[RMDB]
RNA sequence: GGGAACGACUCGAGUAGAGUCGAAAACCUCGUUAAUCAAUGGGAAAAACGUAACUGCAAACGACGAUACGUUCGCACUGGCAGCCUAACGGCCGCCGUCCUCUGCCUAGUUCACUGACGGGCUAGUGUCGCAAGACCGGUAGCAAUACCGACAGAGCUGACGUCUAAAGUUCGCUUUAGACGUCAGAAAAGAAACAACAACAACAAC
Reactivity to 2A3 in 0.01 (KOAc 150mM, MgCl2 10mM, bicine 150mM(pH8.5), 24C), signal-to-noise 2, nucleotides 027 to 156: c010c000u070c050g090u060u120a130a070u120c130a150a220u250g020g000g090a030a110a090a030a020c040g040u100a030a090c120u100g040c090a090a060a030c040g140a020c080g060a110u060a120c070g060u020u090c060g010c040a020c180u070g000g000c000a000g040c000c010u140a180a040c030g000g000c050c000g000c010c000g030u030c000c010u030c010u030g040c020c000u010a050g070u110u100c040a110c130u240g100a040c220g020g000g000c000u010a000g000u000g000u070c000g000c060a140a000g000a010c000c000g000g000u000a010g020c000a000a110u000a050c020c000g020a000c010a010g000a000g020